[RMDB]
RNA sequence: GGGAACGACUCGAGUAGAGUCGAAAACCGUAGGGUUCCUCGUACGUCCGCGUUUGCUUGGAUUUAUUCGAAAGAGUUGUCAGCAAACGAACUACGGAUUGAAAGGAACCCUAAACGGAAAUCGGUAAUAACUCGGUUCGCCGAGUUAUUACCGAAACCUUCUCCAUUGCUUCGGCAAUGGAGAAGGAAAAGAAACAACAACAACAAC
Reactivity to 2A3 in 0.01 (KOAc 150mM, MgCl2 10mM, bicine 150mM(pH8.5), 24C), signal-to-noise 1, nucleotides 027 to 156: c010c000g060u010a000g060g020g020u030u000c010c000u010c030g050u060a060c060g000u030c000c010g070c000g020u000u010u010g020c010u100u230g130g030a040u300u140u090a030u000u090c030g060a060a040a050g010a010g000u020u000g020u000c010a000g000c030a010a000a010c000g010a060a020c050u230a040c040g020g000a010u020u130g090a100a040a040g000g000a000a000c000c010c000u000a000a050a000c030g020g030a070a200a120u020c010g000g000u010a000a000u000a010a000c000u020c030g040g020u070u080c150g050c100c000g000a060g030u000u020a000u000u000a000c000c000g030a020a020a020
Overview: Source: RMDB library RNAMAK, as collected in RNAgym. The record gives the reactivity of an RNA of 207 nucleotides to 2A3. The 2A3 profile rests on 684 reads. As a SHAPE reagent, 2A3 marks flexible, mostly unpaired nucleotides at the ribose 2'-OH. 2A3 adducts were read by reverse transcription with SuperScript II with manganese.